RNA sequence: GGGAACGACUCGAGUAGAGUCGAAAAGAUAUGGAGCGUGAGGCUUGAUGACCCGUAACAUCGGUCGGAAACGACCGUGGGCAAGAGUGUAGCGCUCCUAAGUCAAAGCGGCGGUUCGCCGCCGCAAGUUCUAUUCUGAGUUCGCUCAGAAUAGAACAAAAGAAACAACAACAACAAC
Reactivity to 2A3 in 0.01 (KOAc 150mM, MgCl2 10mM, bicine 150mM(pH8.5), 24C), signal-to-noise 4, nucleotides 027 to 126: g020a010u070a020u170g000g000a000g010c000g010u040g010a080g140g010c020u030u030g030a070u300g120a200c030c000c020g100u170a160a050c040a220u220c010g010g010u010c000g000g010a080a100a020c010g000a000c000c010g010u080g000g000g000c020a020a030g020a010g050u300g000u050a010g000c010g010c000u010c000c000u010a000a000g000u000c030a040a040a060g000c000g010g010c000g000g080u060u130c280g070c100c000g000c000c000g000c000a000a000
Reactivity to DMS in 0.01 (KOAc 150mM, MgCl2 10mM, bicine 150mM(pH8.5), 24C), signal-to-noise 5, nucleotides 027 to 126: g010a050u000a300u000g000g000a010g010c020g000u000g000a200g010g000c000u000u000g020a180u020g000a300c000c010c020g020u000a060a160c300a100u010c010g020g000u000c000g030g000a090a130a170c020g000a000c000c000g030u010g000g000g000c020a120a220g010a020g010u000g000u000a300g000c000g010c000u010c000c000u000a010a060g010u000c040a080a120a120g000c000g000g030c000g010g010u000u010c230g010c000c000g040c000c000g010c010a030a030
Structure probing data (2A3 and DMS) for a 177-nucleotide construct. It was measured as part of the RMDB library TTRDEL. In probing experiments dimethyl sulfate is read out at A N1 and C N3, which are open when not base-paired. Conditions: 150 mM KOAc, 10 mM MgCl2 and 150 mM bicine (pH 8.5), 24 C.